[RMDB]
The record gives the reactivity of an RNA of 177 nucleotides to 2A3 and DMS.
RNA sequence: GGGAACGACUCGAGUAGAGUCGAAAAGCAAAAGAGAAGCUGCAAGUACCACACUUUCUUUAUUUGCUAACGCGAGCGUACAACGCGUCUUGAGCACCUCAAGAGAGGCAAAAAGACCAGCAGCGCCAAAUAAAUCGGAUUUCGAUCCGAUUUAUUUAAAAGAAACAACAACAACAAC
Reactivity to 2A3 in 0.01 (KOAc 150mM, MgCl2 10mM, bicine 150mM(pH8.5), 24C), signal-to-noise 9, nucleotides 027 to 126: g030c020a030a030a060a010g070a010g030a070a020g010c030u030g010c050a060a040g060u070a100c040c020a040c020a030c050u050u100u080c020u050u140u100a250u040u100u050g010c010u040a060a030c030g010c010g050a060g050c060g060u150a070c080a130a020c090g010c020g020u000c010u010u020g010a020g020c050a070c040c020u000c020a140a020g130a020g000a010g110g000c040a040a070a010a060a000g030a030c030c030a010g010c010a000g020c010g010c040c030
Reactivity to DMS in 0.01 (KOAc 150mM, MgCl2 10mM, bicine 150mM(pH8.5), 24C), signal-to-noise 9, nucleotides 027 to 126: g000c070a050a050a070a040g010a040g000a100a150g000c050u000g000c050a050a060g010u010a060c060c080a140c190a080c060u000u010u010c000u000u000u010a070u010u010u010g010c010u000a130a160c100g000c020g000a090g010c070g010u020a060c170a090a100c100g000c050g020u000c050u000u020g000a190g020c150a110c060c020u000c030a080a080g010a100g010a040g000g010c070a030a050a070a050a030g000a050c040c050a090g000c060a100g000c020g000c070c090
The RNA was probed in 150 mM KOAc, 10 mM MgCl2 and 150 mM bicine (pH 8.5) at 24 C.